[RMDB]
RNA sequence: GGGAACGACUCGAGUAGAGUCGAAAAGACGCCUGUGUGGCGAAACGAGCAAUGGAAUAAGCCGCAAUAGAAGAUGAGAUGGAAGCGGCAAGAUAGAAUGCUCGCAAAGAGAUCCAUCUCACAGAGAAGCCUAUUAGGAUUUCGAUCCUAAUAGGCUAAAAGAAACAACAACAACAAC
Reactivity to DMS in 0.01 (KOAc 150mM, MgCl2 10mM, bicine 150mM(pH8.5), 24C), signal-to-noise 3, nucleotides 027 to 126: g010a160c060g000c000c000u030g000u070g020u020g000g000c000g000a020a080a130c040g010a010g000c000a090a060u020g020g030a300a130u020a080a160g000c000c020g020c000a130a140u060a140g030a120a050g010a100u010g010a000g010a020u000g020g010a040a210g000c000g010g000c000a020a060g000a120u050a070g000a110a080u000g010c000u000c000g010c160a070a120a090g000a120g040a120u010c000c000a010u000c000u000c010a010c090a180g000a120g000a110
Reactivity to 2A3 in 0.01 (KOAc 150mM, MgCl2 10mM, bicine 150mM(pH8.5), 24C), signal-to-noise 4, nucleotides 027 to 126: g110a010c020g030c000c030u160g060u080g130u200g230g000c020g000a070a030a020c010g050a000g000c000a060a260u150g070g130a150a080u140a160a030g020c020c000g000c010a040a040u060a120g160a110a030g070a150u040g000a000g000a010u000g020g020a050a070g020c000g000g020c000a020a020g030a010u080a030g180a120a100u070g000c020u040c020g000c020a060a100a020g090a000g010a020u000c000c000a000u010c000u040c000a000c000a000g090a000g030a060